[RMDB]
RNA sequence: GGGAACGACUCGAGUAGAGUCGAAAAUCAGAAUCAGGCCGGAGUGUUUAGCGCUUCGUAAACACGGUCGUACAUCCAGCCGGUAGCCUGGUUCCUUGCAUUGAGUGAUGUACGGAGUUUAUAGAGCAAAAGAAAGACCUGUUCGCAGGUCUUUCAACUACUCCUUUAGGUUCGCCUAAAGGAGUAGAAAAGAAACAACAACAACAAC
Reactivity to 2A3 in 0.01 (KOAc 150mM, MgCl2 10mM, bicine 150mM(pH8.5), 24C), signal-to-noise 3, nucleotides 027 to 156: u040c020a010g020a000a000u020c000a000g020g010c020c010g040g010a020g010u030g040u100u180u210a120g080c020g000c020u020u000c000g030u060a000a060a010c110a020c030g020g020u030c000g000u030a010c000a010u010c020c040a010g090c050c000g010g030u040a010g020c000c000u040g010g010u000u010c040c000u080u120g030c020a160u010u240g090a060g080u130g010a010u010g000u010a000c030g040g010a050g030u120u180u020a210u080a050g060a020g060c070a090a050a030a080g000a000a010a010g000a000c000c000u020g040u050u100c300g000c060a000g000g000u010c000u000u000u000c000a010a000
Reactivity to DMS in 0.01 (KOAc 150mM, MgCl2 10mM, bicine 150mM(pH8.5), 24C), signal-to-noise 2, nucleotides 027 to 156: u020c030a090g020a050a030u000c030a030g000g030c000c060g030g030a130g030u010g000u020u000u000a130g030c060g030c000u000u000c040g050u000a020a030a090c060a100c030g030g000u020c040g040u000a060c050a040u000c030c040a170g010c020c050g020g010u020a090g020c040c000u020g060g030u000u000c000c030u000u010g020c130a200u010u010g000a170g000u010g000a040u000g030u000a020c010g020g000a100g000u000u000u000a090u010a090g000a110g010c040a070a040a090a170g010a020a010a020g010a010c000c000u010g030u000u000c200g060c020a020g030g000u000c000u020u000u010c000a050a170

Conditions: 150 mM KOAc, 10 mM MgCl2 and 150 mM bicine (pH 8.5), 24 C. Structure probing data (2A3 and DMS) for a 207-nucleotide construct. The 2A3 profile rests on 1,842 reads. DMS adducts were read by reverse transcription with MarathonRT. The data come from the RNA Mapping Database (RMDB), library M2RFOK. DMS (dimethyl sulfate) methylates the pairing face of unpaired adenines and cytosines.